RNA sequence: GGGAACGACUCGAGUAGAGUCGAAAACCUUGUAAAAUCAUUUCAUAUUGAAAUUGGUCCCUAUAAUAUUCAUUUUAGUCCUCGUUUUGAGGGACUAAAAUCAAAUAUUCUACAUAUUACAAGGACCGGCUACUCCAAAUUUCGAUUUGGAGUAGCCAAAAGAAACAACAACAACAAC
Reactivity to 2A3 in 0.01 (KOAc 150mM, MgCl2 10mM, bicine 150mM(pH8.5), 24C), signal-to-noise 2, nucleotides 027 to 126: c000c000u010u040g070u010a070a060a010a070u040c030a020u030u050u010c070a060u120a200u210u300g010a050a040a020u090u070g020g030u050c030c000c000u010a010u000a090a000u000a000u030u020c020a000u000u000u000u000a000g000u000c000c000u060c030g170u170u050u080u300g100a120g000g010g010a000c000u000a000a000a000a000u020c030a000a000a030u000a010u040u000c010u040a100c030a110u170a070u120u040a000c000a000a000g010g000a000c020c000

The record gives the reactivity of an RNA of 177 nucleotides to 2A3. It was measured as part of the RMDB library RFM100. The RNA was probed in 150 mM KOAc, 10 mM MgCl2 and 150 mM bicine (pH 8.5) at 24 C. The 2A3 profile rests on 656 reads. High 2A3 reactivity points to a flexible backbone, as in loops and unpaired stretches.